Notes:
Source: RMDB libraries RFM100 and RFMREP, as collected in RNAgym. This 177-nucleotide RNA was probed chemically with DMS and 2A3. 2A3 adducts were read by reverse transcription with SuperScript II with manganese.
RNA sequence: GGGAACGACUCGAGUAGAGUCGAAAACAAUCUAUGUCUCAACCCACCCAACUCCACUCAAAUAUCUCUUUGGUUCCAGAGAGUCGUAGUGUAUAGCCAGAGAGCCAGUCAGAGGGCGCUAUCAUGCCUAUAUAUCGUUAUUCGUAACGAUAUAUAGAAAAGAAACAACAACAACAAC
Reactivity to DMS in 0.01 (KOAc 150mM, MgCl2 10mM, bicine 150mM(pH8.5), 24C), signal-to-noise 9, nucleotides 027 to 126: c090a100a090u030c090u010a060u010g000u010c010u000c060a100a100c040c010c020a120c030c020c030a060a100c050u010c050c030a050c040u000c060a070a080a100u020a080u010c020u000c020u000u010u010g010g010u010u010c060c040a100g000a090g000a030g010u010c060g010u010a060g010u010g010u010a080u020a090g010c020c030a050g000a070g000a060g010c080c050a050g010u010c070a050g010a080g000g000g010c040g010c050u000a060u010c070a050u010g000c140
Reactivity to 2A3 in 0.01 (KOAc 150mM, MgCl2 10mM, bicine 150mM(pH8.5), 24C), signal-to-noise 9, nucleotides 027 to 126: c030a010a040u090c030u140a110u120g070u010c010u010c030a050a080c000c010c010a050c010c010c000a030a040c020u020c020c010a040c020u050c050a030a090a070u160a130u050c020u000c000u040u040u050g060g000u130u040c050c010a030g040a000g000a010g130u020c030g040u060a060g020u040g030u100a070u100a100g020c010c020a020g020a000g000a000g060c010c010a030g030u070c020a010g020a060g070g030g000c020g000c020u050a070u180c030a050u160g030c000
For DMS the reverse transcriptase was MarathonRT.